This 170-nucleotide RNA was probed chemically with 2A3 and DMS. The RNA was probed in 150 mM KOAc, 10 mM MgCl2 and 150 mM bicine (pH 8.5) at 24 C. 2A3 adducts were read by reverse transcription with SuperScript II with manganese. Values cover nucleotides 27 to 129. The 2A3 profile rests on 4,211 reads.
RNA sequence: GGGAACGACUCGAGUAGAGUCGAAAAGAAGCGAGGGGGAAAGUAAAGAAAGCAACGGGGCUAGCGAGUGGAUGUUCCACCCCCCAGCGGUGCCGAGUGAGGCCUAUCCCGGGGAUCGGUGAAUCGUAUGCACCCUGCUUCGGCAGGGUGAAAAGAAACAACAACAACAAC
Reactivity to 2A3 in 0.01 (KOAc 150mM, MgCl2 10mM, bicine 150mM(pH8.5), 24C), signal-to-noise 3, nucleotides 027 to 129: g070a010a000g000c050g080a020g000g020g000g000g020a000a000a090g040u100a000a020a010g020a030a060a000g010c030a060a050c060g000g080g000g030c070u080a040g020c000g070a060g020u050g010g050a110u140g090u100u050c010c000a090c010c000c000c000c000c000a000g060c010g020g020u060g020c020c000g000a020g020u120g020a080g000g090c000c000u010a060u070c020c010c020g000g020g000g000a080u090c090g030g010u020g070a040a000u070c020g030u080a040u110g040
Reactivity to DMS in 0.01 (KOAc 150mM, MgCl2 10mM, bicine 150mM(pH8.5), 24C), signal-to-noise 3, nucleotides 027 to 129: g030a100a020g040c000g080a000g010g020g000g000g070a050a060a050g060u100a090a070a110g040a050a070a090g000c000a060a130c100g000g000g000g000c090u000a000g050c040g030a110g040u000g000g000a070u020g040u020u030c040c030a020c000c000c000c000c000c000a070g000c080g000g050u030g000c080c030g000a090g040u050g000a150g000g020c070c040u030a090u030c020c000c070g050g040g020g040a080u000c090g000g000u030g030a040a100u020c040g010u030a070u060g020